Chemical mapping of a 177-nucleotide RNA with 2A3 and DMS. Values cover nucleotides 27 to 126. For 2A3, 4,130 sequencing reads were counted. It was measured as part of the RMDB library OK2TRN. For DMS the reverse transcriptase was MarathonRT. 2A3 adducts were read by reverse transcription with SuperScript II with manganese. The reactions ran in a buffer of 150 mM KOAc, 10 mM MgCl2 and 150 mM bicine (pH 8.5), at 24 C.
[RMDB]
RNA sequence: GGGAACGACUCGAGUAGAGUCGAAAACGGCAGGAACGCUUCGACCGUAUGGAUCGAGCCCCACAGGUCGACGUCGAUCACCCAACGCCAGUCGUCGUGCGUCAUCUCCACGAUCGGACCGCCGACACGUCUUGAUAACGUUCGCGUUAUCAAGACGAAAAGAAACAACAACAACAAC
Reactivity to 2A3 in 0.01 (KOAc 150mM, MgCl2 10mM, bicine 150mM(pH8.5), 24C), signal-to-noise 3, nucleotides 027 to 126: c020g030g000c030a050g070g010a120a030c020g020c080u060u020c010g020a010c000c000g070u190a080u140g020g040a100u110c160g080a050g090c040c010c000c010a010c030a040g050g000u010c000g000a000c020g050u140c020g030a070u070c030a060c030c000c010a050a020c080g040c030c010a020g110u100c030g020u000c000g000u090g080c020g010u050c020a090u040c050u010c030c050a060c070g050a050u060c040g050g010a020c050c030g000c010c000g020a010c020a010
Reactivity to DMS in 0.01 (KOAc 150mM, MgCl2 10mM, bicine 150mM(pH8.5), 24C), signal-to-noise 3, nucleotides 027 to 126: c070g010g000c000a160g030g020a100a060c110g010c080u000u020c000g020a010c020c010g020u000a150u000g020g030a080u000c090g010a130g040c160c060c010c000a050c170a100g030g000u000c020g030a030c050g000u010c010g000a090u000c060a130c040c010c020a110a100c130g040c050c020a100g000u010c070g010u010c050g000u010g030c050g010u000c100a080u000c070u000c070c120a060c100g000a070u000c080g010g000a080c070c030g030c010c030g000a090c040a260